[RMDB]
RNA sequence: GGGAACGACUCGAGUAGAGUCGAAAAUGCAACAAGUGGGGGAGAGCUGCAAUGGAACAGCAGCAACAGCAGCAGUCUAAGAAGACUGUACACUUGGGACGCGACCAUCUGGCCGCAUAUCUCCUUGUAAUAAGACGCCGUUCGCGGCGUCUUAUUAAAAAGAAACAACAACAACAAC
Reactivity to DMS in 0.01 (KOAc 150mM, MgCl2 10mM, bicine 150mM(pH8.5), 24C), signal-to-noise 2, nucleotides 027 to 126: u030g000c080a210a150c090a020a030g030u030g010g000g010g040g020a060g000a140g000c000u000g010c000a070a100u060g030g040a190a080c240a110g000c000a010g000c000a070a090c100a090g000c150a130g040c000a000g000u010c020u000a250a170g020a080a070g000a010c000u000g010u020a040c000a020c070u000u000g000g010g020a130c180g000c000g010a070c000c010a170u040c190u110g000g060c000c040g050c020a070u010a030u000c090u000c010c060u000u000g010
Reactivity to 2A3 in 0.01 (KOAc 150mM, MgCl2 10mM, bicine 150mM(pH8.5), 24C), signal-to-noise 2, nucleotides 027 to 126: u150g020c000a030a000c000a020a010g030u120g020g020g000g010g020a040g020a020g010c000u000g020c020a090a240u110g120g090a180a070c020a050g020c020a000g030c030a000a020c010a030g060c000a010g010c000a000g000u000c000u030a260a000g080a070a040g000a130c000u000g010u040a060c040a000c000u010u040g000g060g040a060c080g000c000g000a010c010c010a020u140c090u240g040g000c000c000g010c020a030u030a070u170c040u000c000c000u080u080g010